Conditions: 150 mM KOAc, 10 mM MgCl2 and 150 mM bicine (pH 8.5), 24 C. An RNA of 177 nucleotides, treated with DMS and read out base by base. The DMS profile rests on 8,252 reads.

RNA sequence: GGGAACGACUCGAGUAGAGUCGAAAAGAUAUGGAGAAUUGGGAUCCGAACUACUCGCCUCGGAUAGCUCCCGCUCGGAAACGAGCGAGGAGUGCGGAGUGCGAGCGGAUCCCAAUUCUCCUAAGUCGUAUGCAGUAUAGUUCGCUAUACUGCAUACAAAAGAAACAACAACAACAAC
Reactivity to DMS in 0.01 (KOAc 150mM, MgCl2 10mM, bicine 150mM(pH8.5), 24C), signal-to-noise 5, nucleotides 027 to 126: g010a110u010a300u010g010g010a020g010a040a000u010u000g000g010g000a010u000c010c010g000a080a050c080u020a300c020u000c010g010c010c010u000c010g010g010a160u010a210g000c000u010c000c010c010g010c000u000c000g010g000a090a110a240c000g010a010g000c000g000a090g030g000a010g020u000g010c150g010g000a030g010u020g030c020g000a010g000c000g010g000a010u000c000c000c000a000a000u000u000c000u000c000c000u000a010a070g010u000c110